This 207-nucleotide RNA was probed chemically with 2A3 and DMS. For 2A3, 3,303 sequencing reads were counted.
RNA sequence: GGGAACGACUCGAGUAGAGUCGAAAACGACCACCUGACGGGUCGGACAUAGCGUCAGGAUCAUCCGUGACAGUCACCACGGUAAUCAUGUGUCUGAUGAUGGUUUUCCAUCUUAAUCUGACUGUGUCGUAGCAGUCUACAGUACUAUGACAUUAGAGAUAAUGCUCAGGUUCGCCUGAGCAUUAUCAAAAGAAACAACAACAACAAC
Reactivity to 2A3 in 0.01 (KOAc 150mM, MgCl2 10mM, bicine 150mM(pH8.5), 24C), signal-to-noise 4, nucleotides 027 to 156: c010g000a000c000c010a010c000c000u000g000a000c000g010g000g000u010c040g020g070a090c130a090u180a020g070c020g000u010c000a000g000g010a010u110c040a010u040c000c010g010u000g030a060c000a000g000u010c000a000c000c010a000c000g000g020u080a020a040u090c110a040u050g000u000g000u000c020u020g020a050u040g000a000u000g030g070u070u220u210u110c010c000a010u000c000u020u070a180a140u090c090u070g010a000c000u010g010u000g010u050c010g010u020a010g000c020a000g010u010c070u090a070c020a030g060u040a060c000u010a030u050g010a020c030a040u060u160a050g020a000
Reactivity to DMS in 0.01 (KOAc 150mM, MgCl2 10mM, bicine 150mM(pH8.5), 24C), signal-to-noise 2, nucleotides 027 to 156: c030g000a100c000c040a090c000c000u000g000a020c010g000g020g040u000c000g020g010a130c080a050u010a090g030c000g060u010c000a010g010g020a230u010c070a090u000c000c020g020u000g020a110c000a220g020u000c030a300c020c000a040c030g020g000u010a080a100u020c030a140u000g000u000g000u000c040u010g010a100u000g010a060u020g020g020u000u010u000u000c000c020a070u000c030u000u000a090a180u040c060u000g010a050c010u010g010u000g000u000c030g060u000a030g010c000a080g000u000c090u000a100c150a100g010u000a040c020u010a000u000g000a050c010a040u030u000a080g010a260